Structure probing data (DMS and 2A3) for a 177-nucleotide construct. Source: RMDB library RFM100, as collected in RNAgym. The 2A3 profile rests on 915 reads. 2A3 adducts were read by reverse transcription with SuperScript II with manganese. The RNA was probed in 150 mM KOAc, 10 mM MgCl2 and 150 mM bicine (pH 8.5) at 24 C. The DMS profile rests on 3,411 reads.
RNA sequence: GGGAACGACUCGAGUAGAGUCGAAAAAAAGAAGACCCUGUUGAGCUUGACUCUAGUCUGACGUUGUGAAAUGACUUGGGAGGUGUAGAAUAAGUGGGAGGCUCUGCCGUCUGUGAAAUACCACUACGUUAUCAGUUGCUUUCGAGCAACUGAUAACAAAAGAAACAACAACAACAAC
Reactivity to DMS in 0.01 (KOAc 150mM, MgCl2 10mM, bicine 150mM(pH8.5), 24C), signal-to-noise 2, nucleotides 027 to 126: a020a010a030g020a110a030g020a040c020c050c010u010g000u010u040g000a070g030c010u010u020g000a020c000u010c050u000a060g000u000c010u000g010a140c130g000u010u020g000u010g010a100a100a140u000g010a030c080u000u010g020g000g040a070g000g020u010g010u020a010g030a070a070u010a070a070g000u020g010g010g020a100g000g010c020u010c080u010g010c030c020g000u010c040u030g000u060g010a030a020a080u000a180c050c060a070c080u010a090c200
Reactivity to 2A3 in 0.01 (KOAc 150mM, MgCl2 10mM, bicine 150mM(pH8.5), 24C), signal-to-noise 2, nucleotides 027 to 126: a000a000a000g160a010a030g110a070c000c000c050u020g060u070u030g020a010g000c010u090u020g060a040c010u010c010u070a090g010u000c010u050g060a040c090g020u050u030g030u040g060a150a110a080u130g020a000c000u000u030g020g020g020a040g070g010u100g030u030a060g070a080a020u140a280a000g010u020g000g040g050a060g000g010c020u010c030u060g060c020c000g060u030c050u030g160u030g020a110a030a030u110a020c010c010a060c050u120a060c050